[RMDB]
RNA sequence: GGGAACGACUCGAGUAGAGUCGAAAAAACAACAAGCCCGAAAUCAUAAUAAAAACAAAGCACGCACCUACUUGGGGGGGAGCUUCGGCUCCCCCAGUAGCUUCACCCCUCCCUCCGUUUUCCCCGUCCGAAUCUAAAGAUUCGUCUUUAGAUUCGGAAAAGAAACAACAACAACAAC
Reactivity to DMS in 0.01 (KOAc 150mM, MgCl2 10mM, bicine 150mM(pH8.5), 24C), signal-to-noise 1, nucleotides 027 to 126: a050a090c150a130a060c120a070a110g000c000c010c040g000a020a100a020u010c050a030u080a160a090u000a040a110a080a090a040c050a120a170a100g010c050a030c090g000c040a050c040c020u000a000c020u020u000g040g040g000g000g070g000g000a000g000c060u000u060c120g020g050c000u010c000c000c020c000c000a040g000u050a010g000c130u020u020c040a070c020c010c020c010u030c020c050c000u000c040c020g040u000u000u000u000c000c030c010c030g000u000
Reactivity to 2A3 in 0.01 (KOAc 150mM, MgCl2 10mM, bicine 150mM(pH8.5), 24C), signal-to-noise 3, nucleotides 027 to 126: a000a000c130a040a010c060a020a040g090c000c000c010g030a070a100a000u110c060a050u070a300a000u090a040a170a060a040a000c060a060a120a010g020c000a010c080g020c000a050c010c000u070a050c050u090u110g020g000g000g000g050g010g070a010g000c000u030u050c200g050g000c000u010c010c000c000c000c000a010g000u010a000g010c000u070u060c030a060c020c010c000c000u030c000c000c000u000c000c000g000u000u000u050u010c000c000c000c000g020u030